Structure probing data (2A3) for a 207-nucleotide construct.

[RMDB]
RNA sequence: GGGAACGACUCGAGUAGAGUCGAAAAAGCGUAGCGGUACGCCGCUACGCAAGGCGCAUUUGAACUGUAUUGUACGCCUUUCAUAAAGCAAAAGUACUAAAAAAACGUGCCGUUACGACGGCACGAAAAAACAUCCAUUGGUUCGCCAAUGGAUGAAUCAUGAUACGACCUUCGGGUCGUAUCAUGAAAAAGAAACAACAACAACAAC
Reactivity to 2A3 in 0.01 (KOAc 150mM, MgCl2 10mM, bicine 150mM(pH8.5), 24C), signal-to-noise 1, nucleotides 027 to 156: a000g000c010g000u000a000g000c000g000g000u030a010c300g030c020c000g000c030u000a000c000g010c000a000a000g000g070c010g030c000a020u120u030u300g260a240a090c100u120g040u210a090u140u130g010u070a040c000g000c000c000u000u010u070c090a090u160a050a040a040g030c060a010a040a100a070g060u140a120c160u300a140a000a000a080a080a000a000c010g020u000g000c000c000g010u040u010a020c290g010a010c000g050g000c000a000c000g000a000a000a000a000a000a030c000a000u000c000c000a000u000u010g000g000u030u040c090g000c040c000a000a000u000g000g000a000u000g010a000a000

Overview: For 2A3 the reverse transcriptase was SuperScript II with manganese. Conditions: 150 mM KOAc, 10 mM MgCl2 and 150 mM bicine (pH 8.5), 24 C. For 2A3, 607 sequencing reads were counted.